The record gives the reactivity of an RNA of 177 nucleotides to 2A3 and DMS.
The RNA was probed in 150 mM KOAc, 10 mM MgCl2 and 150 mM bicine (pH 8.5) at 24 C.
DMS adducts were read by reverse transcription with MarathonRT.

RNA sequence: GGGAACGACUCGAGUAGAGUCGAAAAUCAUGAACGUGGAAUUCCUAGUAGUUGGUAGUCACUAACGACUAACGAAUGAGUCCCUGUUCUUUGUACACACCGCCCGUCGUUAUCUAAGAUGGAGGUGUAUCACCCACACUUUCGAGUGUGGGUGAUAAAAAGAAACAACAACAACAAC
Reactivity to 2A3 in 0.01 (KOAc 150mM, MgCl2 10mM, bicine 150mM(pH8.5), 24C), signal-to-noise 4, nucleotides 027 to 126: u110c060a050u060g060a060a020c020g030u060g020g060a050a100u060u060c000c000u000a020g010u010a030g000u010u040g060g020u070a060g190u140c080a060c090u070a060a020c040g030a010c010u020a080a010c020g060a060a020u090g010a010g050u020c000c010c000u000g020u000u000c000u060u040u070g100u070a040c030a000c010a000c050c010g130c070c010c000g010u000c020g040u080u120a150u210c100u150a070a040g020a000u000g010g000a000g000g000u020g000
Reactivity to DMS in 0.01 (KOAc 150mM, MgCl2 10mM, bicine 150mM(pH8.5), 24C), signal-to-noise 5, nucleotides 027 to 126: u030c030a060u000g000a040a030c090g000u010g010g010a120a080u000u010c010c190u000a030g000u000a070g000u000u010g020g000u010a070g010u040c180a170c050u000a030a050c020g000a030c000u000a020a050c200g000a080a050u000g000a090g000u000c000c000c010u020g010u000u000c010u010u010u020g010u000a140c280a110c000a020c000c000g000c190c020c010g010u010c010g010u010u020a120u050c200u030a110a090g000a030u000g030g000a300g000g000u000g000